An RNA of 177 nucleotides, treated with 2A3 and DMS and read out base by base.
RNA sequence: GGGAACGACUCGAGUAGAGUCGAAAAUGCUGAGCUUUCGAGCUCAGCAGAGGCAACCAAGCAGCGCAACGAGACAAGACGAGCAUAAGAUCGAGCAUGCUACAAUACGGCACUUCGGUGCCGUAAAUGACUACCCAUAGUUCGCUAUGGGUAGUCAAAAAGAAACAACAACAACAAC
Reactivity to 2A3 in 0.01 (KOAc 150mM, MgCl2 10mM, bicine 150mM(pH8.5), 24C), signal-to-noise 2, nucleotides 027 to 126: u040g010c000u010g000a000g000c030u040u030u220c210g090a010g000c000u010c010a010g010c000a000g000a010g020g050c020a020a060c000c010a050a000g000c010a000g020c020g020c050a020a080c100g020a020g000a080c030a070a030g070a080c080g010a030g070c010a010u090a210a070g050a070u080c040g010a020g050c000a010u040g040c010u070a090c010a030a110u060a010c000g000g020c000a000c000u060u090c240g080g020u020g000c000c000g000u000a000a000a000
Reactivity to DMS in 0.01 (KOAc 150mM, MgCl2 10mM, bicine 150mM(pH8.5), 24C), signal-to-noise 3, nucleotides 027 to 126: u000g010c000u000g010a000g010c010u000u000u020c150g000a030g010c000u000c000a010g020c010a010g000a060g010g000c110a060a100c020c040a110a100g050c030a050g000c100g000c050a040a070c070g010a070g000a080c080a040a070g000a120c110g000a080g000c020a060u000a070a110g000a090u020c060g000a150g010c080a050u000g020c070u010a050c150a070a150u000a000c000g000g010c000a000c000u000u020c180g020g000u000g000c000c000g000u000a000a030a100

As a SHAPE reagent, 2A3 marks flexible, mostly unpaired nucleotides at the ribose 2'-OH. Reactivities are rounded to 0.1 and cut off at 0 and 3. The RNA was probed in 150 mM KOAc, 10 mM MgCl2 and 150 mM bicine (pH 8.5) at 24 C.